[RMDB]
RNA sequence: GGGAACGACUCGAGUAGAGUCGAAAAGAAACCAUAUACGAGCCCGCGUAUAUGGACGGGCGAGAAAAAGAAAGAAAGAAACGUAGUGUGAGGCCCCGCACUACGGAAGGGCCGAAAAAGAAAGAAAGGUAUAGAGAUACUUCGGUAUCUCUAUACCAAAAGAAACAACAACAACAAC
Reactivity to 2A3 in 0.01 (KOAc 150mM, MgCl2 10mM, bicine 150mM(pH8.5), 24C), signal-to-noise 3, nucleotides 027 to 126: g060a040a090a000c000c000a000u010a000u000a000c000g010a010g010c000c000c000g040c000g000u000a010u000a000u030g000g010a020c030g020g010g070c090g050a080g180a090a120a000a010a000g240a060a050a010g120a020a100a010g080a040a130a000c010g000u000a000g010u010g000u010g020a140g050g060c000c000c000c000g000c000a010c000u000a010c000g000g020a030a090g010g000g010c010c010g060a100a160a060a020a000g160a000a090a020g090a040a130a000
Reactivity to DMS in 0.01 (KOAc 150mM, MgCl2 10mM, bicine 150mM(pH8.5), 24C), signal-to-noise 3, nucleotides 027 to 126: g010a150a140a150c000c000a000u010a020u010a010c010g000a170g000c030c010c000g000c040g000u000a020u000a020u000g000g000a050c110g000g000g020c010g010a210g010a040a060a050a070a080g000a070a070a060g000a070a130a120g040a110a070a090c010g010u000a000g000u000g000u000g000a140g000g010c010c000c030c030g010c000a010c000u000a010c000g010g000a060a040g010g010g000c030c100g030a050a020a080a110a050g030a060a040a100g020a100a130a090